About this RNA:
Chemical mapping of a 207-nucleotide RNA with 2A3 and DMS. Reactivities are given for positions 27 through 156. The reactions ran in a buffer of 150 mM KOAc, 10 mM MgCl2 and 150 mM bicine (pH 8.5), at 24 C. For 2A3, 5,638 sequencing reads were counted. For 2A3 the reverse transcriptase was SuperScript II with manganese.
RNA sequence: GGGAACGACUCGAGUAGAGUCGAAAAGCGUACUACGGUUAGCUAACAGGCGAAGAACAUGAGGAAUCGCAUAUCCCAAAUAGGAUAUGCGUGGCCUCAUGGGAGCCUGGACCCUAACCGUAUCGCAAACGAGUUAUAAGUUCGCUUAUAACUCGAAACAUCCUAAUCAGUUCGCUGAUUAGGAUGUAAAAGAAACAACAACAACAAC
Reactivity to 2A3 in 0.01 (KOAc 150mM, MgCl2 10mM, bicine 150mM(pH8.5), 24C), signal-to-noise 4, nucleotides 027 to 156: g000c000g040u110a080c050u000a000c040g000g000u000u000a010g000c000u040a150a050c010a010g000g020c010g140a210a020g010a080a010c000a000u000g010a010g020g040a050a100u100c000g000c010a000u010a000u020c020c020c040a100a210a090u300a050g000g010a000u010a000u000g000c000g010u030g010g090c010c010u000c000a000u000g000g000g000a000g000c000c000u090g000g010a020c100c000c000u010a000a000c000c000g000u000a000u010c010g000c000a030a040a010c010g000a000g000u000u000a000u000a000a000g010u020u050c050g010c020u000u000a000u000a000a000c000u010c000g000a000a000
Reactivity to DMS in 0.01 (KOAc 150mM, MgCl2 10mM, bicine 150mM(pH8.5), 24C), signal-to-noise 3, nucleotides 027 to 156: g050c020g040u010a020c060u000a020c010g010g000u000u000a020g010c000u000a190a300c020a040g000g010c000g010a100a250g030a150a130c000a010u000g000a030g030g000a020a140u000c020g000c000a020u000a020u000c010c000c020a030a130a240u010a060g010g020a020u010a000u000g000c000g090u000g000g000c010c000u000c000a020u000g000g000g010a300g010c010c000u000g010g000a110c300c300c000u000a010a020c010c010g010u000a000u000c020g040c020a050a140a180c000g010a050g020u000u000a010u000a000a030g000u000u010c300g060c010u020u000a010u000a000a010c010u000c000g020a030a100